[RMDB]
Description
The data come from the RNA Mapping Database (RMDB), library RNAMAK. Structure probing data (2A3) for a 207-nucleotide construct.

RNA sequence: GGGAACGACUCGAGUAGAGUCGAAAACAUCGCGUCCUUCGGGACGCGAUGAAAAAACCUUUGUGCAAUUGUCAGUCGCGUGACAGCCCAUUGGGCUGCACGACGACUUGGAUUUAUUGCACUCUGGUAAAAACAUAGCCACUUCGGUGGCUAUGAAUCAUCUAAUUCCGUUCGCGGAAUUAGAUGAAAAAGAAACAACAACAACAAC
Reactivity to 2A3 in 0.01 (KOAc 150mM, MgCl2 10mM, bicine 150mM(pH8.5), 24C), signal-to-noise 1, nucleotides 027 to 156: c010a010u000c000g030c000g060u050c020c040u110u150c300g070g000g000a000c000g070c000g000a000u010g000a020a000a000a000a000a000c010c000u000u000u000g000u000g000c000a000a020u010u050g010u040c020a000g010u010c000g000c020g010u000g090a280c020a010g000c030c000c000a300u150u300g050g000g000c010u010g000c050a010c000g040a180c010g000a000c000u000u030g010g010a000u040u130u300a000u070u000g000c010a000c000u020c010u020g030g030u120a140a110a000a000a000c000a000u000a000g000c000c000a000c020u030u100c300g140g000u020g000g000c000u000a000u010g000a020a020